[RMDB]
RNA sequence: GGGAACGACUCGAGUAGAGUCGAAAAAAGUCAUUACAUCCUGAUAUUAUAUACGUCGGCGCCAAUGUUAGUGGGUACGCGUUAGAACUAUUAAAUGACUCAGGCAUUGUCGUACAGUUUAAUAUGAGACUUAUCCUGUAUUCGUACAGGAUAAGUCAAAAGAAACAACAACAACAAC
Reactivity to DMS in 0.01 (KOAc 150mM, MgCl2 10mM, bicine 150mM(pH8.5), 24C), signal-to-noise 4, nucleotides 027 to 126: a060a080g010u000c140a070u000u010a130c140a120u000c000c010u000g010a030u000a010u000u000a030u010a090u000a040c020g000u010c130g000g000c020g000c040c020a010a020u010g000u000u000a090g030u010g010g000g020u000a070c110g020c160g020u000u010a090g000a090a110c160u010a200u010u000a040a080a070u000g010a040c020u000c030a050g010g000c040a030u000u000g010u000c010g010u000a020c030a140g000u000u000u000a020a020u000a030u000g000a190
Reactivity to 2A3 in 0.01 (KOAc 150mM, MgCl2 10mM, bicine 150mM(pH8.5), 24C), signal-to-noise 3, nucleotides 027 to 126: a010a000g230u170c120a140u180u100a050c010a060u030c000c000u010g020a000u000a010u070u040a040u000a010u000a170c050g040u040c100g260g000c010g000c000c010a010a000u020g020u070u030a220g130u050g050g040g000u040a060c090g030c030g060u020u040a070g050a120a050c090u070a090u270u170a100a060a120u180g020a000c010u000c020a010g010g030c020a010u030u050g030u020c000g000u020a020c010a000g030u020u050u000a050a040u080a020u030g170a180